Chemical mapping of a 177-nucleotide RNA with 2A3 and DMS.
RNA sequence: GGGAACGACUCGAGUAGAGUCGAAAAGAUAUGGAAAGAUUGACGAGACGUCAUCGGAAACGAUGAAACGUCGAUGAGUCAAAUAGCUUUCCUAAGUCAAAGACUAAUUACUUCGGUAAUUAGUCAAUCUAUCUAAUCACUUCGGUGAUUAGAUAGAAAAAGAAACAACAACAACAAC
Reactivity to 2A3 in 0.01 (KOAc 150mM, MgCl2 10mM, bicine 150mM(pH8.5), 24C), signal-to-noise 3, nucleotides 027 to 126: g000a010u010a010u050g000g020a010a000a000g050a060u020u040g000a020c040g040a020g000a080c000g010u010c000a000u020c000g000g010a000a010a010c010g000a010u020g030a140a290a080c010g000u000c020g020a110u110g020a020g010u020c000a000a040a070u300a080g110c000u010u010u000c000c000u000a020a000g020u000c060a200a080a080g010a000c000u000a000a000u020u000a000c000u020u070c300g170g000u000a000a000u000u000a000g020u000c000a000a020
Reactivity to DMS in 0.01 (KOAc 150mM, MgCl2 10mM, bicine 150mM(pH8.5), 24C), signal-to-noise 5, nucleotides 027 to 126: g000a000u000a030u010g000g010a010a010a010g010a240u000u000g010a020c010g000a050g010a000c010g000u000c010a010u000c000g010g010a010a020a030c000g000a010u000g000a080a090a150c010g010u000c000g010a160u010g010a300g010u000c000a000a030a180u010a200g010c020u000u000u000c000c000u000a000a120g000u000c010a130a110a150g000a020c000u000a000a010u000u000a000c000u000u010c280g040g010u000a000a000u010u000a010g000u000c000a060a080
Reactivities are given for positions 27 through 126. For DMS the reverse transcriptase was MarathonRT. It was measured as part of the RMDB library TTRDES. The RNA was probed in 150 mM KOAc, 10 mM MgCl2 and 150 mM bicine (pH 8.5) at 24 C.